[RMDB]
RNA sequence: GGGAACGACUCGAGUAGAGUCGAAAAAUGCAAUUGUCCAUGCCUAGCCCCACCUCUAUGCGCUGUCGAUGGCACCAACGGAGUGGACCUGGUUGCCUAUAAACCGAUUAUUAGUAGCGCGUUACACACAUUGUACCCCGUUCGCGGGGUACAAUGUAAAAGAAACAACAACAACAAC
Reactivity to 2A3 in 0.01 (KOAc 150mM, MgCl2 10mM, bicine 150mM(pH8.5), 24C), signal-to-noise 1, nucleotides 027 to 126: a000u110g030c040a030a070u120u080g020u060c010c030a040u060g030c000c000u040a000g000c000c000c000c000a040c000c030u050c020u000a030u100g040c020g010c000u050g000u020c000g040a000u060g030g000c010a000c020c000a160a010c090g040g010a070g090u170g050g070a050c000c030u030g030g030u220u150g000c000c000u030a090u200a030a080a000c100c000g030a040u090u010a080u110u060a290g120u050a000g070c000g010c020g050u010u040a040c100a000c000
Reactivity to DMS in 0.01 (KOAc 150mM, MgCl2 10mM, bicine 150mM(pH8.5), 24C), signal-to-noise 2, nucleotides 027 to 126: a130u000g000c050a080a100u010u010g000u000c030c010a060u000g010c010c060u000a120g010c040c000c020c020a140c130c090u020c030u000a070u010g010c030g000c010u000g000u000c040g000a140u000g000g010c030a030c030c000a070a030c180g020g000a110g030u000g020g000a080c020c030u010g020g010u000u010g010c010c030u000a080u000a020a050a130c150c020g000a040u000u000a090u000u020a120g040u000a050g030c000g010c010g010u000u000a100c120a050c200
Record summary
Structure probing data (2A3 and DMS) for a 177-nucleotide construct. 2A3 is a SHAPE reagent: it acylates the 2'-hydroxyl of flexible nucleotides of all four kinds. For DMS the reverse transcriptase was MarathonRT. The DMS profile rests on 1,327 reads. Values cover nucleotides 27 to 126.